[RMDB]
RNA sequence: GGGAACGACUCGAGUAGAGUCGAAAAAGUGCACUAGGUACGCCUAGUGCACAUUCCAGGACAUACUACUGAGGAUGUCAAAAAUGCAGUUGGAGUCCUCAACUGGAUAGGCUACGGCCUAUCCAGAAAAAGACUUGGUUGUUCGCAACCAAGUCAACAAUAUCUUCUUGUUCGCAAGAAGAUAUUGAAAAGAAACAACAACAACAAC
Reactivity to DMS in 0.01 (KOAc 150mM, MgCl2 10mM, bicine 150mM(pH8.5), 24C), signal-to-noise 4, nucleotides 027 to 156: a120g010u000g010c000a020c000u000a030g020g030u010a080c300g030c010c000u000a010g030u010g020c000a010c000a020u010u000c020c020a210g030g010a120c040a070u000a040c010u000a250c130u020g010a080g030g020a040u010g000u000c020a040a050a080a140a120u000g000c070a170g040u000u000g000g000a230g020u000c010c000u000c020a070a180c000u000g000g010a030u000a010g010g000c000u000a120c300g090g020c000c000u000a000u000c000c000a000g000a010a050a090a170a110g000a010c000u000u000g010g020u000u010g000u000u010c280g010c010a040a000c000c000a010a010g010u010c000a010a080
Reactivity to 2A3 in 0.01 (KOAc 150mM, MgCl2 10mM, bicine 150mM(pH8.5), 24C), signal-to-noise 3, nucleotides 027 to 156: a000g000u000g010c000a000c010u000a000g000g000u030a030c240g110c010c000u010a000g000u000g030c010a000c000a000u000u000c000c000a000g030g020a040c040a080u300a060c040u050a020c040u040g020a030g090g030a070u090g210u300c150a040a140a040a040a040u160g010c030a010g020u060u040g000g040a040g020u010c000c010u030c030a040a040c000u000g000g010a000u000a000g010g000c000u020a030c300g040g000c000c000u000a000u000c000c000a020g010a000a000a000a000a000g000a000c000u000u000g000g000u000u000g030u040u080c260g020c080a000a000c000c000a010a000g000u000c000a000a000